[RMDB]
RNA sequence: GGGAACGACUCGAGUAGAGUCGAAAACACUGGUACAGCUACCCACCAAUCAACCCCAUGUGGCACUACCUCCUUGGCGUCAUCUACCUUUUCCUUGGAGUUGUCUCCAUCUUUGGCAACGGCAUGGGAUAUGCUUCUGAUUCGUCAGAAGCAUAUCAAAAGAAACAACAACAACAAC
Reactivity to 2A3 in 0.01 (KOAc 150mM, MgCl2 10mM, bicine 150mM(pH8.5), 24C), signal-to-noise 7, nucleotides 027 to 126: c040a010c030u060g010g050u140a090c030a030g020c030u060a070c010c010c020a010c020c030a030a100u130c030a040a110c010c000c010c010a020u100g020u100g080g000c020a010c050u050a050c020c000u030c000c010u000u030g030g000c010g040u030c020a060u020c030u050a120c020c000u030u090u060u020c010c010u010u020g030g010a020g020u040u050g030u020c020u030c030c020a110u060c080u080u130u080g020g000c010a020a020c010g060g010c050a080u090g120g010
Reactivity to DMS in 0.01 (KOAc 150mM, MgCl2 10mM, bicine 150mM(pH8.5), 24C), signal-to-noise 9, nucleotides 027 to 126: c100a090c100u000g000g020u010a070c080a070g010c040u000a100c050c020c040a090c070c070a070a090u010c120a080a120c080c010c010c030a100u000g030u000g000g000c040a060c060u010a070c060c020u000c040c050u000u000g010g010c040g010u000c050a050u000c030u000a070c050c020u000u000u010u000c010c030u000u000g010g000a110g010u000u000g010u000c020u000c020c030a040u010c090u000u000u000g010g000c030a040a070c050g010g010c080a060u000g010g010
Description:
The record gives the reactivity of an RNA of 177 nucleotides to 2A3 and DMS. The DMS profile rests on 16,680 reads. It was measured as part of the RMDB library OK2TST. High 2A3 reactivity points to a flexible backbone, as in loops and unpaired stretches. For 2A3, 17,307 sequencing reads were counted. For DMS the reverse transcriptase was MarathonRT.